[RMDB]
RNA sequence: GGGAACGACUCGAGUAGAGUCGAAAAACAUAACAAACUUAUUCAUUUAACUUCAUUUUUUUUGAGUGUAAACACCAAAGUAAAAUGAAUCUAAUCACUACCAACAAUGUGUCAGCCACAAAAAGCGAAAAUGCAGUGGUUUCGACCACUGCAUUUUAAAAGAAACAACAACAACAAC
Reactivity to DMS in 0.01 (KOAc 150mM, MgCl2 10mM, bicine 150mM(pH8.5), 24C), signal-to-noise 1, nucleotides 027 to 126: a090c070a060u060a030a130c110a060a150a060c150u000u000a050u000u000c020a040u010u000u000a050a070c070u000u000c080a000u000u000u000u000u000u000u000u000g030a070g020u000g000u020a050a150a140c030a000c010c000a000a000a000g050u000a040a010a000a000u040g010a080a000u000c080u010a080a030u010c030a040c050u080a080c120c100a100a020c110a000a030u000g030u040g050u050c150a130g010c100c150a090c120a050a060a050a150a020g050c240g010
Reactivity to 2A3 in 0.01 (KOAc 150mM, MgCl2 10mM, bicine 150mM(pH8.5), 24C), signal-to-noise 2, nucleotides 027 to 126: a000c060a030u300a130a010c080a140a080a070c150u170u160a160u210u150c030a130u040u080u240a100a000c050u000u000c000a030u000u000u010u000u000u000u000u000g140a200g020u010g020u060a190a040a000c000a000c040c010a000a010a000g050u000a000a030a000a000u000g010a000a010u040c040u030a090a000u010c000a000c190u050a020c070c070a100a170c040a220a060u050g000u000g000u000c020a000g020c000c000a030c000a000a090a050a000a000g070c030g010